[RMDB]
RNA sequence: GGGAACGACUCGAGUAGAGUCGAAAAGGCAAUAACGAACUGAUUCUAAGCAAGUAAUGGAGAAAUGCCAGGGUCACUAUCUAGCCAUAAUAGUGCUUGACAGUAUGAUACUAACUGAACAAUAAGUAAAAGCGCUGGUACUUCGGUACCAGCGCAACAACUGGCCUUAGUUCGCUAAGGCCAGUUGAAAAGAAACAACAACAACAAC
Reactivity to 2A3 in 0.01 (KOAc 150mM, MgCl2 10mM, bicine 150mM(pH8.5), 24C), signal-to-noise 1, nucleotides 027 to 156: g030g000c020a010a110u120a230a150c100g020a030a030c040u050g030a040u070u050c020u050a040a050g000c030a050a020g020u100a080a080u070g040g030a070g030a080a100a030u080g000c010c000a070g030g000g000u000c000a000c020u010a000u050c050u090a050g010c010c010a060u040a110a010u010a070g030u020g050c030u000u020g000a000c010a000g000u080a040u090g060a010u010a020c000u020a090a000c020u010g050a020a000c030a000a070u030a040a000g030u020a080a130a070a060g000c000g030c040u000g000g040u020a020c000u020u020c200g010g000u010a000c000c020a020g000c010g000c000a000a000